[RMDB]
RNA sequence: GGGAACGACUCGAGUAGAGUCGAAAAUCUUCUUCCAGUGUGGCCCAGGGAAGCCAAAAGAUUGGACAUCCCUGUGUUAGACCAUCAUUUGUUUGCUAUAUGAUGUCAUAGUGGUAGAAUGGUCACUUAAGGUAAAAUCUGAAUAGAGAAAUUUGGCCACUAAUUGCUGGUUCGCCAGCAAUUAGUGAAAAGAAACAACAACAACAAC
Reactivity to 2A3 in 0.01 (KOAc 150mM, MgCl2 10mM, bicine 150mM(pH8.5), 24C), signal-to-noise 2, nucleotides 027 to 156: u020c000u060u000c000u080u000c010c000a130g020u050g050u030g050g040c000c010c060a030g000g000g000a030a060g000c000c000a060a110a020a040g300a260u100u090g010g010a090c020a120u050c000c000c020u000g020u050g000u040u040a040g030a040c060c010a020u060c010a000u020u030u050g210u140u170u150g060c050u030a010u010a030u200g010a050u050g070u090c020a040u040a160g090u000g030g020u000a020g000a130a050u080g020g000u040c020a000c030u090u080a060a040g020g000u040a110a070a020a030u090c040u050g040a100a080u140a150g040a030g070a070a050a040u080u030u080g030g010c060
Reactivity to DMS in 0.01 (KOAc 150mM, MgCl2 10mM, bicine 150mM(pH8.5), 24C), signal-to-noise 1, nucleotides 027 to 156: u010c100u000u000c050u000u000c040c060a090g040u010g040u000g010g000c020c020c000a110g000g010g010a050a180g020c040c020a080a100a150a230g010a300u010u010g010g060a110c050a160u000c000c000c000u010g020u000g010u000u020a080g020a050c060c030a010u010c100a160u000u000u000g040u000u000u010g120c040u000a130u000a110u010g000a100u000g050u010c090a060u020a060g000u010g000g060u020a110g000a040a080u000g000g000u010c080a080c090u000u000a060a100g010g040u000a060a100a070a100u000c000u000g020a090a140u000a070g010a130g010a070a070a240u000u000u000g010g000c050
This 207-nucleotide RNA was probed chemically with 2A3 and DMS. The RNA was probed in 150 mM KOAc, 10 mM MgCl2 and 150 mM bicine (pH 8.5) at 24 C. DMS (dimethyl sulfate) methylates the pairing face of unpaired adenines and cytosines. Source: RMDB library OK3TST, as collected in RNAgym. The 2A3 profile rests on 881 reads.